Source: RMDB library OK3TST, as collected in RNAgym.
Chemical mapping of a 207-nucleotide RNA with DMS and 2A3.
For 2A3 the reverse transcriptase was SuperScript II with manganese.
RNA sequence: GGGAACGACUCGAGUAGAGUCGAAAAACACGGUCGGGGCGCUAAACCUUAUCGUUGAUACGGUUUCCGCGAUCAUUAACACGAUCAGAAAAUUGAUUGCCGAUGGCGACGCCAUGAUCGCGCAGUUCAUCGUUGACGCUGGCCGACAGCUACAGAACUCAAUCUGAUUCUUCGGAAUCAGAUUGAGAAAAGAAACAACAACAACAAC
Reactivity to DMS in 0.01 (KOAc 150mM, MgCl2 10mM, bicine 150mM(pH8.5), 24C), signal-to-noise 1, nucleotides 027 to 156: a110c030a080c000g040g050u000c010g030g030g030g000c020g010c040u010a090a020a020c020c030u000u000a100u000c010g010u000u030g010a010u000a050c170g020g010u000u000u010c050c090g080c020g000a030u010c010a170u000u000a170a130c180a130c040g000a050u000c010a120g000a070a060a140a170u010u000g010a150u000u000g010c060c040g040a090u000g030g000c030g010a090c030g020c050c010a150u020g000a010u000c030g000c000g010c030a080g020u000u000c050a080u000c060g020u010u020g030a050c000g000c050u010g060g000c010c000g050a050c050a130g000c030u010a280c070a190g000a070a170
Reactivity to 2A3 in 0.01 (KOAc 150mM, MgCl2 10mM, bicine 150mM(pH8.5), 24C), signal-to-noise 2, nucleotides 027 to 156: a000c060a020c010g010g000u010c020g020g000g040g000c030g040c040u070a050a060a090c010c010u010u010a030u080c150g200u100u210g030a000u010a070c050g000g000u000u000u040c010c000g000c000g010a000u010c000a050u070u280a130a040c020a020c100g030a050u100c010a060g190a040a250a060a030u170u140g010a050u020u050g080c090c020g080a040u000g040g040c020g060a070c080g060c040c000a020u050g030a050u040c000g000c000g000c080a040g000u060u080c050a040u080c150g040u030u130g010a020c000g010c020u010g060g080c050c020g030a040c020a000g070c030u050a040c030a140g050a150a080
Overview: For DMS, 1,694 sequencing reads were counted. The reactions ran in a buffer of 150 mM KOAc, 10 mM MgCl2 and 150 mM bicine (pH 8.5), at 24 C.